[RMDB]
Description
Source: RMDB library OK2TRN, as collected in RNAgym. Structure probing data (DMS and 2A3) for a 177-nucleotide construct. Conditions: 150 mM KOAc, 10 mM MgCl2 and 150 mM bicine (pH 8.5), 24 C.
RNA sequence: GGGAACGACUCGAGUAGAGUCGAAAAGACGUUGUUCAAUUUUCACCUGAAGAUGCAACGCGUACUGAAUUACCAUUCUUAGUGAAAUGUGUACAAACUGCCGUUGACGCUGGAGCUACAGUUAUUACACGGUUAAGAUGUUCGCAUCUUAACCGUGAAAAGAAACAACAACAACAAC
Reactivity to DMS in 0.01 (KOAc 150mM, MgCl2 10mM, bicine 150mM(pH8.5), 24C), signal-to-noise 3, nucleotides 027 to 126: g000a090c050g000u010u000g020u000u010c090a130a050u010u000u010u000c020a160c170c160u010g000a040a020g020a030u000g020c100a010a030c030g020c070g020u010a100c100u000g010a130a080u010u000a070c050c020a120u000u000c050u000u000a120g040u010g000a070a050a060u000g020u000g010u000a060c150a080a070a100c100u000g000c030c010g010u000u000g000a100c120g010c050u000g000g000a080g010c050u000a040c110a040g010u000u000a070u000u000a150
Reactivity to 2A3 in 0.01 (KOAc 150mM, MgCl2 10mM, bicine 150mM(pH8.5), 24C), signal-to-noise 2, nucleotides 027 to 126: g050a030c030g000u020u010g030u050u040c090a080a090u120u000u000u000c100a160c050c080u130g010a030a000g020a020u050g000c000a030a000c020g020c030g020u010a090c030u050g100a120a080u070u070a090c020c000a040u050u000c050u090u240a150g020u050g170a070a040a060u090g030u020g040u030a040c050a020a140a040c030u040g010c010c000g040u010u060g050a030c030g010c020u070g000g000a020g000c020u060a070c040a040g020u040u010a060u110u040a020